[RMDB]
RNA sequence: GGGAACGACUCGAGUAGAGUCGAAAAACAACAUAAUGGAAAAACGACUAUCUCUUCGACUGCUUCUGUUAUCGCAUUUCGUGCGAGGAUAAAGGUCGUUCGGAGUGAAAGCGUUCACUAUCCACACGCAGUCGCGGAAGUUCGCUUCCGCGACUGCAAAAGAAACAACAACAACAAC
Reactivity to 2A3 in 0.01 (KOAc 150mM, MgCl2 10mM, bicine 150mM(pH8.5), 24C), signal-to-noise 1, nucleotides 027 to 126: a000c090a000a020c040a010u300a230a010u180g000g010a180a000a000a000a000c020g180a230c000u050a040u230c000u000c000u060u000c000g000a000c000u000g020c000u000u000c020u000g130u070u180a040u060c000g000c000a070u110u110u130c120g030u020g000c000g000a000g010g000a000u000a030a010a000g000g000u010c000g040u000u060c000g030g000a000g000u030g000a070a000a000g050c000g000u000u000c070a050c050u000a070u080c000c000a100c000a030c000
The record gives the reactivity of an RNA of 177 nucleotides to 2A3. The reactions ran in a buffer of 150 mM KOAc, 10 mM MgCl2 and 150 mM bicine (pH 8.5), at 24 C.